The record gives the reactivity of an RNA of 177 nucleotides to 2A3 and DMS. The reactions ran in a buffer of 150 mM KOAc, 10 mM MgCl2 and 150 mM bicine (pH 8.5), at 24 C.

[RMDB]
RNA sequence: GGGAACGACUCGAGUAGAGUCGAAAACAAGGUCCAGGCUGGCAACAGAGCAGACAGAGCGAGGCACAUCGAUGGGUAGCGAGGAAAGUCGACUUAAAGUCGUCCAAAGGAAAUAACAAUGUAAACUAGACUAAUAAGAGUUCGCUCUUAUUAGUCUAAAAGAAACAACAACAACAAC
Reactivity to 2A3 in 0.01 (KOAc 150mM, MgCl2 10mM, bicine 150mM(pH8.5), 24C), signal-to-noise 6, nucleotides 027 to 126: c030a030a060g080g000u020c020c030a020g010g040c030u040g010g000c010a050a050c030a080g060a020g030c020a010g040a030c010a010g070a000g040c040g020a070g040g000c020a020c000a130u090c040g090a080u070g010g020g030u040a020g050c040g020a040g010g080a120a060a010g050u020c000g000a010c010u050u120a130a060a040g010u000c000g010u000c010c010a090a050a020g110g040a050a090a020u160a060a050c130a080a100u160g060u170a040a020a030c040u010
Reactivity to DMS in 0.01 (KOAc 150mM, MgCl2 10mM, bicine 150mM(pH8.5), 24C), signal-to-noise 6, nucleotides 027 to 126: c100a100a100g000g000u010c020c050a080g000g010c040u000g000g010c080a080a070c120a070g000a100g020c040a050g000a080c090a050g020a070g010c060g000a090g000g010c070a050c080a060u010c080g020a050u020g000g000g000u000a050g010c060g000a070g010g000a080a060a100g000u000c010g000a030c000u000u030a080a100a060g010u000c010g000u000c000c030a070a080a100g000g000a040a050a040u030a060a070c150a080a080u040g000u020a070a100a100c170u020